[RMDB]
Conditions: 150 mM KOAc, 10 mM MgCl2 and 150 mM bicine (pH 8.5), 24 C.
An RNA of 207 nucleotides, treated with DMS and 2A3 and read out base by base.
DMS adducts were read by reverse transcription with MarathonRT.
For DMS, 2,463 sequencing reads were counted.
For 2A3, 553 sequencing reads were counted.
RNA sequence: GGGAACGACUCGAGUAGAGUCGAAAAUUUGCCGCCAACUGAAUGGAUCUGUCAUCAAUUUUAAUGACUUUGGACAAAAUGCGAAUCGAGGGCGAUUCGGGCCAUUUGAAGGUCGUCUCUAAGUGUGAAAAUGCCCAAGUUAGGGCUGCAAAAGUGAUGGUACCGAUUUAUUCGUAAAUCGGUACCAAAAAGAAACAACAACAACAAC
Reactivity to DMS in 0.01 (KOAc 150mM, MgCl2 10mM, bicine 150mM(pH8.5), 24C), signal-to-noise 1, nucleotides 027 to 156: u010u010u000g000c010c030g030c040c010a080a240c080u010g000a100a110u010g030g000a190u000c010u010g030u000c010a060u020c040a040a110u000u000u000u000a040a130u000g010a050c010u010u010u000g040g010a180c030a020a030a090a130u000g010c050g010a030a090u000c050g000a110g040g020g020c120g000a070u010u000c020g050g000g040c010c000a050u000u000u000g010a200a070g030g000u020c020g060u000c010u000c020u000a060a070g010u010g000u000g010a040a040a050a100u010g030c000c000c000a040a200g050u000u000a130g010g020g040c020u000g000c090a020a030a090a130g020u000g020a140
Reactivity to 2A3 in 0.01 (KOAc 150mM, MgCl2 10mM, bicine 150mM(pH8.5), 24C), signal-to-noise 1, nucleotides 027 to 156: u020u000u070g100c000c010g020c000c000a040a010c000u080g080a000a070u140g000g050a040u010c000u040g040u010c010a050u010c030a030a210u080u120u180u300a090a060u040g030a050c000u010u110u110g120g080a030c020a000a070a050a020u090g000c020g010a000a010u010c020g010a110g100g050g000c000g000a000u010u000c000g000g020g010c030c030a030u050u080u030g060a030a050g000g020u030c000g020u000c000u000c000u020a020a060g000u000g010u000g130a060a030a050a080u100g020c000c000c000a020a020g110u050u170a000g000g000g000c000u040g000c000a020a020a020a020g240u300g070a060